[RMDB]
RNA sequence: GGGAACGACUCGAGUAGAGUCGAAAACGUCGCGUGUUCGCACGCGACGAAACGAGAAACGGCAAAUAAGCCGAUCCCAGGCGAUCGUACGCCAUACUCUAAAAAGUCCCUGCUUCGGCAGGGACAACAUAUUAUCGCCCUUCGGGGCGAUAAUAUGAAAAGAAACAACAACAACAAC
Reactivity to DMS in 0.01 (KOAc 150mM, MgCl2 10mM, bicine 150mM(pH8.5), 24C), signal-to-noise 2, nucleotides 027 to 126: c050g020u000c020g010c010g020u010g010u010u010c180g050c020a010c010g030c030g000a010c010g020a030a070a090c090g010a060g010a040a050a140c000g000g020c000a100a060a190u010a060a170g010c010c000g010a070u000c010c000c000a240g000g010c020g000a070u000c190g000u020a280c010g010c000c010a190u000a060c070u000c060u020a060a090a050a120a090g000u000c000c000c000u000g000c000u000u010c150g030g010c010a000g000g040g000a000c000a010a050
Reactivity to 2A3 in 0.01 (KOAc 150mM, MgCl2 10mM, bicine 150mM(pH8.5), 24C), signal-to-noise 1, nucleotides 027 to 126: c020g000u000c000g000c030g020u000g040u030u030c200g000c060a000c000g020c000g000a010c000g010a000a000a000c030g010a000g080a100a150a000c000g020g000c050a130a180a240u240a300a030g000c000c010g020a020u010c020c010c000a000g000g000c000g010a080u160c110g100u100a100c020g030c010c000a020u050a100c050u080c050u160a070a060a000a030a030g000u000c000c000c000u010g000c000u020u030c190g120g000c000a020g020g000g010a000c000a000a000
An RNA of 177 nucleotides, treated with DMS and 2A3 and read out base by base. The reactions ran in a buffer of 150 mM KOAc, 10 mM MgCl2 and 150 mM bicine (pH 8.5), at 24 C. DMS adducts were read by reverse transcription with MarathonRT. High 2A3 reactivity points to a flexible backbone, as in loops and unpaired stretches. The 2A3 profile rests on 1,322 reads.